[RMDB]
RNA sequence: GGGAACGACUCGAGUAGAGUCGAAAACGAUCACCCCGUCGUCGUAAAGCAUCCCGGACAGCACCAACGGUAGCGACUCGGCUUCGAUCUGGCCCUCGACGGCGGCCCGCAUCGCCGCGUCGGCGGCGGUGAGGAUGGCAUUCGUGCCAUCCUCACCAAAAGAAACAACAACAACAAC
Reactivity to DMS in 0.01 (KOAc 150mM, MgCl2 10mM, bicine 150mM(pH8.5), 24C), signal-to-noise 3, nucleotides 027 to 126: c060g010a080u010c100a270c070c060c000c020g040u000c060g000u000c020g020u010a070a100a120g040c090a080u000c050c020c010g020g040a070c120a110g010c030a080c050c050a060a090c090g020g010u010a080g020c040g010a050c060u000c040g020g010c090u010u000c040g010a030u010c030u010g000g020c020c020c000u000c020g020a040c030g010g070c040g010g030c010c060c090g000c190a060u020c160g010c000c020g010c020g040u000c070g000g010c120g000g030c050
Reactivity to 2A3 in 0.01 (KOAc 150mM, MgCl2 10mM, bicine 150mM(pH8.5), 24C), signal-to-noise 3, nucleotides 027 to 126: c030g040a070u090c050a110c010c000c020c000g030u020c010g000u010c010g060u060a100a090a000g010c000a040u070c030c010c010g020g020a060c050a040g020c040a030c030c030a110a120c060g040g030u070a040g060c010g080a080c030u000c030g040g030c000u160u130c050g080a100u050c070u100g150g000c040c000c000u010c020g020a020c010g080g140c010g000g000c010c010c020g060c010a130u160c080g000c000c000g010c000g050u090c050g040g010c020g020g000c030
The data come from the RNA Mapping Database (RMDB), library OK2TRN. Chemical mapping of a 177-nucleotide RNA with DMS and 2A3. DMS adducts were read by reverse transcription with MarathonRT. 2A3 adducts were read by reverse transcription with SuperScript II with manganese.